[RMDB]
RNA sequence: GGGAACGACUCGAGUAGAGUCGAAAAGAACAUUGGUCAUAAGAUGAUACAUCAUUUGAUUUUGUACAAGUGACUUAAUCUCAGAAUCAAUAUCAACAUUAUUGCCAUUAUUAUUCAUGGUUGAAAACUUAUGAUGGACAUUCGUGUCCAUCAUAAGAAAAGAAACAACAACAACAAC
Reactivity to 2A3 in 0.01 (KOAc 150mM, MgCl2 10mM, bicine 150mM(pH8.5), 24C), signal-to-noise 4, nucleotides 027 to 126: g040a100a000c040a060u040u030g000g020u050c000a000u020a150a040g020a040u050g010a010u040a100c090a060u030c030a060u050u040u070g060a080u010u070u090u100g070u020a050c020a170a130g040u110g300a010c000u080u070a040a060u020c020u000c010a030g110a120a060u040c030a040a010u030a030u110c010a000a060c040a100u080u140a040u070u140g030c000c000a040u050u070a080u190u030a080u120u160c080a040u090g090g010u040u080g050a080a080a000a010
Reactivity to DMS in 0.01 (KOAc 150mM, MgCl2 10mM, bicine 150mM(pH8.5), 24C), signal-to-noise 3, nucleotides 027 to 126: g010a110a070c160a040u010u000g000g000u000c120a100u000a020a060g010a100u000g010a060u000a080c200a110u000c080a070u020u010u000g000a100u000u000u010u010g000u000a030c060a040a090g000u000g010a030c080u000u010a060a050u000c020u000c070a100g010a120a050u010c050a060a040u010a040u000c010a040a080c090a120u000u000a040u000u000g010c010c010a020u010u020a080u010u010a110u030u000c100a050u000g000g000u010u000g000a040a060a060a120